[RMDB]
RNA sequence: GGGAACGACUCGAGUAGAGUCGAAAAGAUAUGGACCUCGUAGGACAUGAAUGAGGGUCGGAAACGACCCGAAUUCAACAGCCUACAGGUCCUAAGUCAAAUCAGUCGUUCUUCGGAACGACUGAAAGGAAUGAAUUACGUUCGCGUAAUUCAUUCCAAAAGAAACAACAACAACAAC
Reactivity to 2A3 in 0.01 (KOAc 150mM, MgCl2 10mM, bicine 150mM(pH8.5), 24C), signal-to-noise 3, nucleotides 027 to 126: g020a010u020a010u070g000g010a000c010c010u070c270g020u010a000g010g030a020c220a300u300g010a010a000u010g000a060g000g020g000u000c000g020g000a010a010a000c000g000a000c000c000c000g010a000a000u000u000c000a030a010c050a020g000c000c000u000a000c010a000g000g010u000c000c000u000a000a000g000u000c000a000a030a230u040c000a000g010u000c000g000u000u000c000u020u020c130g150g000a000a000c000g010a010c000u010g000a050a010a010
Reactivity to DMS in 0.01 (KOAc 150mM, MgCl2 10mM, bicine 150mM(pH8.5), 24C), signal-to-noise 4, nucleotides 027 to 126: g020a010u000a100u030g000g000a020c010c000u000c300g000u000a000g000g000a040c110a220u010g000a000a010u000g000a300g010g010g030u000c000g040g000a010a020a030c010g000a000c000c000c000g000a100a010u000u000c000a110a040c240a160g000c000c000u000a000c000a010g010g000u000c000c000u010a000a050g000u000c010a140a130a170u000c000a000g030u000c000g020u000u000c000u000u010c200g030g010a010a010c010g010a000c000u000g000a010a040a150